[RMDB]
RNA sequence: GGGAACGACUCGAGUAGAGUCGAAAAACAUUAAGUUUCGACUUAAUGUAAACCCGAUGAAGCGGCACAUACGGAGCUUGAUACAUCUAAGAGUGCAAAUAAAAAGUUGAUCCUUCGGGAUCAACAAUCUAUCAUGAGGUUUCGACCUCAUGAUAGAAAAAGAAACAACAACAACAAC
Reactivity to 2A3 in 0.01 (KOAc 150mM, MgCl2 10mM, bicine 150mM(pH8.5), 24C), signal-to-noise 3, nucleotides 027 to 126: a000c000a010u000u000a020a000g010u000u020u150c160g060a020c000u000u000a000a000u010g000u000a060a030a030c000c000c040g010a070u150g050a050a030g060c090g040g030c070a030c010a050u200a080c120g030g050a020g000c010u040u040g040a060u070a240c050a070u030c030u080a040a060g080a020g070u050g040c040a020a060a050u170a020a110a010a000a010g000u000u000g000a000u000c010c000u010u050c270g090g010g000a000u000c010a000a000c000a000a000
Reactivity to DMS in 0.01 (KOAc 150mM, MgCl2 10mM, bicine 150mM(pH8.5), 24C), signal-to-noise 3, nucleotides 027 to 126: a020c010a010u000u000a010a000g000u000u000u030c160g050a040c000u000u000a000a000u000g000u010a040a100a120c000c000c000g010a100u010g010a060a060g020c110g000g010c030a020c030a070u000a110c130g000g010a060g010c050u000u000g010a120u010a110c110a060u000c060u000a110a080g010a070g020u010g010c030a060a070a090u020a050a060a110a100a050g010u000u000g000a010u000c000c000u000u020c210g010g010g000a010u000c000a000a000c000a060a050